This 177-nucleotide RNA was probed chemically with DMS and 2A3.
Reactivities are rounded to 0.1 and cut off at 0 and 3.
The DMS profile rests on 959 reads.
Conditions: 150 mM KOAc, 10 mM MgCl2 and 150 mM bicine (pH 8.5), 24 C.
Source: RMDB library OK1LIB, as collected in RNAgym.
For 2A3 the reverse transcriptase was SuperScript II with manganese.
RNA sequence: GGGAACGACUCGAGUAGAGUCGAAAAGAAAAGAAGGCAAAAGAAACUAACUAUCGGCAGCGUAGAAUGCCCUACGGAUAGGGAGAAACAUCCUAGGAAGAUGAAAAGAAAGCCUUCGAAAGAAAAAGGGUAAUGAACAGUUCGCUGUUCAUUACCCAAAAGAAACAACAACAACAAC
Reactivity to DMS in 0.01 (KOAc 150mM, MgCl2 10mM, bicine 150mM(pH8.5), 24C), signal-to-noise 1, nucleotides 027 to 126: g000a020a080a090a200g010a060a000g000g010c000a050a090a120a040g000a070a110a140c140u030a080a080c000u000a000u000c070g000g030c050a240g030c170g000u000a000g000a200a080u070g000c130c080c050u000a040c070g000g030a000u000a000g030g050g000a080g020a270a030a050c050a000u000c010c000u000a140g000g010a160a110g000a000u010g010a090a010a080a250g010a240a300a070g000c000c000u010u040c040g000a000a060a120g000a070a200a090a240a040
Reactivity to 2A3 in 0.01 (KOAc 150mM, MgCl2 10mM, bicine 150mM(pH8.5), 24C), signal-to-noise 1, nucleotides 027 to 126: g050a000a140a000a000g000a000a000g000g000c000a000a020a200a000g060a060a090a000c020u020a010a010c000u000a000u110c000g170g080c150a070g000c140g030u080a030g090a190a080u240g070c050c050c000u040a010c040g020g000a000u030a010g000g020g000a080g050a000a070a000c000a000u050c000c000u080a090g220g210a000a150g000a030u090g020a000a000a000a230g030a060a140a040g000c000c000u000u000c000g010a010a010a000g030a000a000a070a000a020